[RMDB]
RNA sequence: GGGAACGACUCGAGUAGAGUCGAAAAUGAAAUCAAAAUUAGAGAAGUGAAGGCUGAGAUGGUAAUGGUAAUGAAGGUAGGAUAUUGUCUCUGGUUUACGGUAACCACCACCACCAAAAUAAAAAAACCAUUAUCCCAUGUUCGCAUGGGAUAAUGGAAAAGAAACAACAACAACAAC
Reactivity to DMS in 0.01 (KOAc 150mM, MgCl2 10mM, bicine 150mM(pH8.5), 24C), signal-to-noise 1, nucleotides 027 to 126: u000g000a140a090a130u000c020a000a060a040a110u000u010a050g000a050g000a080a020g040u000g000a040a070g020g000c000u000g020a070g010a060u010g000g020u000a010a030u000g000g000u010a050a110u000g000a070a020g000g000u000a070g000g000a080u000a050u000u000g010u000c040u000c030u000g010g000u000u000u000a070c050g010g010u000a070a030c020c030a080c030c000a080c090c090a060c040c020a030a030a010a090u060a010a020a050a110a040a000a130
Reactivity to 2A3 in 0.01 (KOAc 150mM, MgCl2 10mM, bicine 150mM(pH8.5), 24C), signal-to-noise 1, nucleotides 027 to 126: u100g010a040a010a040u100c050a040a020a020a100u130u160a070g030a010g010a140a000g060u050g090a090a040g040g000c000u030g020a030g000a090u040g000g060u020a050a020u050g030g000u020a050a040u110g090a060a010g070g000u040a030g060g010a050u010a070u120u060g090u000c000u000c020u080g070g070u070u060u060a020c040g000g050u040a060a010c000c020a030c000c000a000c020c040a020c010c010a050a060a030a030u280a050a150a040a000a010a010a000
Chemical mapping of a 177-nucleotide RNA with DMS and 2A3. For DMS, 830 sequencing reads were counted. 2A3 is a SHAPE reagent: it acylates the 2'-hydroxyl of flexible nucleotides of all four kinds. The data come from the RNA Mapping Database (RMDB), library M2PK90.